Chemical mapping of a 177-nucleotide RNA with 2A3 and DMS. It was measured as part of the RMDB library OK1LIB. Conditions: 150 mM KOAc, 10 mM MgCl2 and 150 mM bicine (pH 8.5), 24 C.
RNA sequence: GGGAACGACUCGAGUAGAGUCGAAAAUUUAGGUUAAGCUUCGCCUGCAGUCGUGUUCCAUCCUCGCAAAACUCGAGAGAACACUUGUCCUCGCGGAAGCUGAGCUCGGUCAGCUUGAUAGGUGAGGCCACCCGGGAUGAUUCGUCAUCCCGGGUGGAAAAGAAACAACAACAACAAC
Reactivity to 2A3 in 0.01 (KOAc 150mM, MgCl2 10mM, bicine 150mM(pH8.5), 24C), signal-to-noise 2, nucleotides 027 to 126: u140u150u100a020g060g010u050u070a120a000g020c000u000u010c000g030c040c010u020g000c020a030g020u100c050g000u030g070u050u020c050c030a060u040c010c010u000c020g080c090a000a040a030a110c060u020c000g070a070g000a000g000a060a000c010a020c030u070u070g030u000c000c030u030c020g000c020g010g240a000a000g000c000u000g010a000g010c070u080c160g080g180u000c030a000g000c000u060u100g060a120u200a120g130g000u010g000a010g050g000
Reactivity to DMS in 0.01 (KOAc 150mM, MgCl2 10mM, bicine 150mM(pH8.5), 24C), signal-to-noise 2, nucleotides 027 to 126: u050u000u140a070g010g040u000u000a010a190g000c090u000u000c020g020c000c040u040g000c010a130g000u000c110g030u000g010u010u010c040c070a160u010c090c000u010c020g000c150a070a050a050a130c210u000c010g000a000g060a060g040a060a020c020a080c080u040u000g000u000c020c010u000c080g020c060g000g000a040a000g000c010u010g010a150g090c180u000c000g020g000u000c020a020g000c000u000u000g000a050u040a100g070g000u000g000a090g000g040